Structure probing data (DMS and 2A3) for a 207-nucleotide construct. 2A3 adducts were read by reverse transcription with SuperScript II with manganese. The reactions ran in a buffer of 150 mM KOAc, 10 mM MgCl2 and 150 mM bicine (pH 8.5), at 24 C. It was measured as part of the RMDB library M2RFPK.

RNA sequence: GGGAACGACUCGAGUAGAGUCGAAAAGUCUGUGCGUUUCCAUUUAAGUAUCCUGAAAACGGGCUUUUCAGCAUGGAACGUACAUAUUAAAUAGUAGGAGUGCAUAGUGGCCCGUAUAGCAGGCAUUGAGGCGAGGAUUGUUUCGACAAUCCUCGAAUCUCCGCUAAAAGUUCGCUUUUAGCGGAGAAAAAGAAACAACAACAACAAC
Reactivity to DMS in 0.01 (KOAc 150mM, MgCl2 10mM, bicine 150mM(pH8.5), 24C), signal-to-noise 1, nucleotides 027 to 156: g030u010c080u000g020u010g020c060g040u000u000u000c000c000a150u010u000u000a080a120g050u000a070u000c030c010u000g030a040a030a090a090c030g000g030g040c140u000u000u010u000c070a280g000c110a080u000g020g040a070a040c050g020u000a080c030a060u000a050u000u010a050a160a220u000a100g000u010a120g010g010a220g010u000g000c010a150u000a110g010u000g030g010c040c010c030g060u000a080u000a120g000c030a030g030g010c060a120u000u000g010a140g000g000c000g010a000g000g000a010u000u000g020u000u000u000c270g020a080c010a020a010u000c000c000u000c000g000a030a110
Reactivity to 2A3 in 0.01 (KOAc 150mM, MgCl2 10mM, bicine 150mM(pH8.5), 24C), signal-to-noise 2, nucleotides 027 to 156: g060u030c030u030g030u040g010c040g000u000u090u030c000c000a040u070u060u040a090a020g110u120a210u190c000c020u000g050a070a010a000a070c070g050g000g020c050u010u050u060u180c080a050g010c000a000u000g000g050a110a000c020g000u010a000c000a000u030a000u010u080a020a080a080u160a030g060u010a020g030g130a030g030u030g000c080a070u100a160g100u030g030g000c010c020c010g010u000a010u020a050g000c000a010g000g000c040a070u080u070g050a020g040g040c000g000a000g000g010a000u000u000g000u010u060u030c080g030a000c000a000a000u020c000c000u000c000g020a010a020